[RMDB]
RNA sequence: GGGAACGACUCGAGUAGAGUCGAAAAGAUAUGGAUCACGCUUUUGACGUCUUAACAGUCGGAAACGACUGGGAGGACGAUAAGCAUGAUCCUAAGUCAAACACUGUUAGGUUCGCCUAACAGUGAACACUUCUAUAAGCUUCGGCUUAUAGAAGUGAAAAGAAACAACAACAACAAC
Reactivity to DMS in 0.01 (KOAc 150mM, MgCl2 10mM, bicine 150mM(pH8.5), 24C), signal-to-noise 6, nucleotides 027 to 126: g000a050u000a300u000g000g000a010u010c000a020c040g020c000u000u000u000u000g010a190c120g010u010c000u000u000a110a090c000a010g010u000c010g010g000a090a110a170c010g010a010c000u000g010g000g000a070g010g000a020c000g010a080u000a010a010g010c000a040u000g000a010u000c000c010u000a030a090g020u000c020a160a120a240c010a010c000u000g000u000u000a000g000g010u000u010c290g010c010c000u000a000a010c000a010g010u000g000a020a150
Reactivity to 2A3 in 0.01 (KOAc 150mM, MgCl2 10mM, bicine 150mM(pH8.5), 24C), signal-to-noise 5, nucleotides 027 to 126: g030a030u080a040u180g000g010a000u000c000a000c030g000c020u110u100u100u200g300a150c050g000u000c000u010u030a030a010c000a000g000u010c000g020g030a070a070a070c010g000a010c000u000g000g020g000a030g000g000a000c000g000a000u010a010a000g000c000a000u010g000a000u000c000c000u010a120a020g060u010c040a030a050a060c000a000c010u000g000u010u010a010g030g050u050u070c300g130c060c000u000a000a000c000a000g000u000g000a000a000

An RNA of 177 nucleotides, treated with DMS and 2A3 and read out base by base. Reactivities are rounded to 0.1 and cut off at 0 and 3. Source: RMDB library TTRDEL, as collected in RNAgym. The RNA was probed in 150 mM KOAc, 10 mM MgCl2 and 150 mM bicine (pH 8.5) at 24 C. DMS adducts were read by reverse transcription with MarathonRT.